[RMDB]
RNA sequence: GGGAACGACUCGAGUAGAGUCGAAAACUUAACGCGUUCGCGCGUUAAGAAACAACUUAAACAUCGAGUUGACGAUGACACAAAUACCGUCAGUGUAGACGGAAAGCAUUCGCUUCGGCGAAUGCAACCCGUACUGAUAGUUCGCUAUCAGUACGGGAAAAGAAACAACAACAACAAC
Reactivity to 2A3 in 0.01 (KOAc 150mM, MgCl2 10mM, bicine 150mM(pH8.5), 24C), signal-to-noise 5, nucleotides 027 to 126: c000u000u000a000a000c000g020c000g000u020u070c190g020c000g010c000g100u020u000a010a010g000a000a050a000c030a000a010c030u110u250a170a130a030c020a130u020c020g010a020g070u040u070g140a100c040g050a080u140g040a020c020a010c020a190a140a030u140a140c020c000g020u010c030a110g100u060g120u300a080g010a010c000g000g110a000a070a020g000c000a000u000u000c000g010c020u010u080c240g120g000c010g000a000a000u000g000c000a000a020
Reactivity to DMS in 0.01 (KOAc 150mM, MgCl2 10mM, bicine 150mM(pH8.5), 24C), signal-to-noise 3, nucleotides 027 to 126: c000u000u000a000a000c000g010c020g030u000u020c220g020c010g030c000g020u000u000a010a010g010a060a130a200c150a030a040c060u020u010a100a100a150c060a090u000c020g000a080g000u000u000g010a170c100g000a060u000g000a110c170a070c260a050a080a150u020a060c010c000g010u000c000a170g020u000g030u000a090g030a020c010g000g000a040a060a080g010c000a000u000u000c000g020c020u000u010c170g060g010c000g000a010a000u000g000c020a010a040
Chemical mapping of a 177-nucleotide RNA with 2A3 and DMS. DMS adducts were read by reverse transcription with MarathonRT. The 2A3 profile rests on 6,678 reads.